Notes
An RNA of 177 nucleotides, treated with DMS and 2A3 and read out base by base. Reactivities are given for positions 27 through 126. 2A3 adducts were read by reverse transcription with SuperScript II with manganese. DMS adducts were read by reverse transcription with MarathonRT.
RNA sequence: GGGAACGACUCGAGUAGAGUCGAAAAAUACACAAAUUGGGCUGAAAUACUGCUCUACUUGUCACCAUGCCUCCCUAGAAUAAACUGCCUUUUGAUGACCGGGACGAAUUGAGUGAAAUCGUAACGGAAGCCGUCAGAUAUUCGUAUCUGACGGCUUAAAAGAAACAACAACAACAAC
Reactivity to DMS in 0.01 (KOAc 150mM, MgCl2 10mM, bicine 150mM(pH8.5), 24C), signal-to-noise 2, nucleotides 027 to 126: a050u010a110c130a060c060a050a140a100u040u010g030g000g000c000u030g000a110a130a030u010a110c230u040g000c020u000c000u000a050c090u000u000g020u000c060a090c060c070a090u000g000c040c030u000c030c000c010u000a080g000a080a090u010a060a080a050c100u000g000c030c030u010u000u010u000g010a090u010g000a150c000c010g000g000g000a020c010g010a010a140u020u000g030a110g050u030g020a080a030a130u000c020g010u000a000a030c020g000g000
Reactivity to 2A3 in 0.01 (KOAc 150mM, MgCl2 10mM, bicine 150mM(pH8.5), 24C), signal-to-noise 1, nucleotides 027 to 126: a010u230a020c170a000c000a030a050a000u140u140g030g000g000c000u060g000a020a170a000u190a180c300u150g000c070u000c000u020a010c000u000u280g100u080c000a000c160c000a040u130g000c000c000u090c000c000c060u060a110g000a290a010u170a180a110a000c070u050g000c000c000u070u010u010u040g270a120u100g060a000c000c000g030g000g000a000c040g000a050a000u140u090g110a060g160u090g130a060a060a000u000c000g000u010a000a000c000g000g000